This 207-nucleotide RNA was probed chemically with 2A3.
For 2A3, 1,824 sequencing reads were counted.
Source: RMDB library M2RFPK, as collected in RNAgym.
Conditions: 150 mM KOAc, 10 mM MgCl2 and 150 mM bicine (pH 8.5), 24 C.
RNA sequence: GGGAACGACUCGAGUAGAGUCGAAAAGAAAGAAAGAAAGAAAUCUGACAGAAUGACGGAUUCGAUCGUUGUGGUCGGCGGGCCACCACGUCAUACCUUCGCACUGUCUCCGGGCAGACCGCCAUAAAAAAGCGGAUCUACUUCGGUAGAUCCGCAACUUGAUAAUGCACUUCGGUGCAUUAUCAAGAAAAGAAACAACAACAACAAC
Reactivity to 2A3 in 0.01 (KOAc 150mM, MgCl2 10mM, bicine 150mM(pH8.5), 24C), signal-to-noise 3, nucleotides 027 to 156: g070a030a060a030g080a020a090a040g140a080a100a040g050a020a120a050u050c020u040g020a040c050a060g130a170a220u130g050a080c050g010g020a060u070u090c050g050a060u080c060g000u010u010g000u000g030g000u020c050g020g040c020g020g000g000c000c000a010c020c020a000c000g020u020c020a050u120a210c010c030u060u100c060g010c020a030c040u000g000u000c020u020c080c080g020g000g000c010a010g010a070c020c020g040c010c020a090u260a000a120a020a020a000a000g000c010g000g000a000u000c010u010a010c000u000u020c180g050g000u000a000g010a010u000c000c000g000c000a000a000